Annotation: The record gives the reactivity of an RNA of 177 nucleotides to 2A3 and DMS. 2A3 adducts were read by reverse transcription with SuperScript II with manganese. It was measured as part of the RMDB libraries RFM100 and RFMREP.
RNA sequence: GGGAACGACUCGAGUAGAGUCGAAAAGGUUUGUUUACAAAACCGCAUACAAUAAUGCGAUGUUUGCCGAAAGGCAAACUCGGCAGAUAAACAGUGAGGCUGAAUUCCUGCCGAACUGUUUAUCAAACCAAGGUUAUGUUUUCGAACAUAACCUUGGAAAAGAAACAACAACAACAAC
Reactivity to 2A3 in 0.01 (KOAc 150mM, MgCl2 10mM, bicine 150mM(pH8.5), 24C), signal-to-noise 7, nucleotides 027 to 126: g040g010u040u010u030g110u090u220u110a130c100a010a040a010a010c010c000g030c040a050u160a130c070a030a180u230a220a070u190g050c010g020a010u140g010u000u010u000g000c000c000g060a100a020a030g000g010c000a000a000a000c000u000c000g060g000c010a020g000a000u000a000a010a000c000a000g000u010g020a010g010g000c020u040g060a120a100u240u130c030c040u080g010c000c000g000a010a000c000u000g000u000u000u000a000u000c000a000a010a000
Reactivity to DMS in 0.01 (KOAc 150mM, MgCl2 10mM, bicine 150mM(pH8.5), 24C), signal-to-noise 7, nucleotides 027 to 126: g010g010u000u000u000g010u020u020u030a160c120a070a020a020a010c020c010g010c180a110u030a090c210a090a070u030a060a100u010g000c000g000a040u020g010u000u000u010g000c000c000g010a100a090a180g010g000c000a000a000a000c000u000c030g010g010c090a080g000a010u000a020a010a000c010a010g010u010g000a300g020g010c010u000g010a130a230u020u020c130c050u010g000c000c000g000a220a020c000u000g000u000u000u010a000u000c000a080a070a160